[RMDB]
RNA sequence: GGGAACGACUCGAGUAGAGUCGAAAAGCGCCAGGUCCGAUCGCCGAUGUGAUGCGGCGGUGGAUCUCGGCGCCGAUUCGGUCGCGCACCGCACGCACCGCGGGGUCGGCGCCGCCGUCGAGCAGCGGACAACCCUUACGUUCGCGUAAGGGUUGUCAAAAGAAACAACAACAACAAC
Reactivity to 2A3 in 0.01 (KOAc 150mM, MgCl2 10mM, bicine 150mM(pH8.5), 24C), signal-to-noise 2, nucleotides 027 to 126: g030c010g010c010c000a010g020g050u000c010c030g190a060u030c000g000c040c000g020a020u070g170u250g170a120u300g050c000g000g000c000g010g020u000g000g000a020u000c010u000c080g000g000c000g000c000c000g010a040u100u090c020g010g050u030c060g000c000g010c020a060c050c010g020c040a060c060g030c030a110c100c000g010c020g030g040g000g030u090c080g120g020c000g000c010c020g030c000c000g070u020c030g030a040g060c010a020g000c080g070
Reactivity to DMS in 0.01 (KOAc 150mM, MgCl2 10mM, bicine 150mM(pH8.5), 24C), signal-to-noise 2, nucleotides 027 to 126: g020c070g020c010c010a030g010g010u000c010c000g000a000u000c000g030c000c000g000a050u000g050u020g020a090u010g030c020g000g000c000g020g020u000g000g020a010u000c000u000c140g040g000c010g000c030c020g000a080u000u000c030g000g000u020c230g010c060g000c070a120c060c070g000c030a100c070g000c070a100c100c120g000c280g020g000g020g000u000c050g000g010c000g020c020c040g000c070c020g010u010c070g000a060g010c080a080g010c110g030